[RMDB]
RNA sequence: GGGAACGACUCGAGUAGAGUCGAAAACCAUUACGGUACCUGAAGAGUUCGCAAGUCAUGUUGCCAACUUCCAAAAAUCAGGUUAUAGUAAAUAUGUCACUGUUCAGGGACCACCUGGCACUGGCAACACAGUACCUGUGUUCGCACAGGUACUGUGAAAAGAAACAACAACAACAAC
Reactivity to 2A3 in 0.01 (KOAc 150mM, MgCl2 10mM, bicine 150mM(pH8.5), 24C), signal-to-noise 2, nucleotides 027 to 126: c010c000a030u030u060a020c010g000g030u020a000c000c000u010g020a060a020g000a040g050u010u000c020g020c040a000a020g050u150c040a050u140g070u140u010g000c010c020a000a000c000u140u090c050c030a080a160a060a050a110u040c010a010g010g000u000u040a080u030a030g030u040a000a060a060u140a100u090g010u010c000a000c030u010g000u300u260c020a010g030g100g270a300c070c020a110c040c040u020g000g010c000a000c010u000g000g010c010a010a030
Reactivity to DMS in 0.01 (KOAc 150mM, MgCl2 10mM, bicine 150mM(pH8.5), 24C), signal-to-noise 2, nucleotides 027 to 126: c000c010a150u000u000a030c000g010g060u000a000c000c000u000g000a040a170g040a030g020u000u000c300g000c020a030a030g030u000c300a050u000g000u000u000g000c000c080a030a070c040u000u010c130c190a000a060a060a110a210u000c020a000g010g000u010u000a030u000a110g000u000a010a040a050u020a050u000g000u000c000a020c100u010g000u000u010c000a030g000g020g010a190c230c220a130c010c010u000g000g000c030a050c050u010g010g010c000a040a200